[RMDB]
RNA sequence: GGGAACGACUCGAGUAGAGUCGAAAACGAGGAUAGAGAAAGAGGACACAAAUCGAUCUUACGAAUCACAUGCUCAUGUCUAAAGCGACUGCGAGGGGCCUCUGCUUCUCAAUUGGAGACGAUAAGCGCCGUGAUCCCUAUUCGUAGGGAUCACGGCAAAAGAAACAACAACAACAAC
Reactivity to 2A3 in 0.01 (KOAc 150mM, MgCl2 10mM, bicine 150mM(pH8.5), 24C), signal-to-noise 1, nucleotides 027 to 126: c080g010a050g070g000a030u120a250g140a060g130a000a030a000g070a050g020g000a050c000a000c030a080a160a160u120c110g030a000u000c000u140u210a070c070g300a150a080u040c000a010c110a210u300g020c000u000c030a030u050g060u000c120u080a190a030a010g120c020g000a000c000u000g130c110g030a060g000g000g040g000c020c020u000c020u070g070c020u000u000c000u020c000a090a070u120u240g120g000a020g000a050c080g020a010u040a250a040g000c000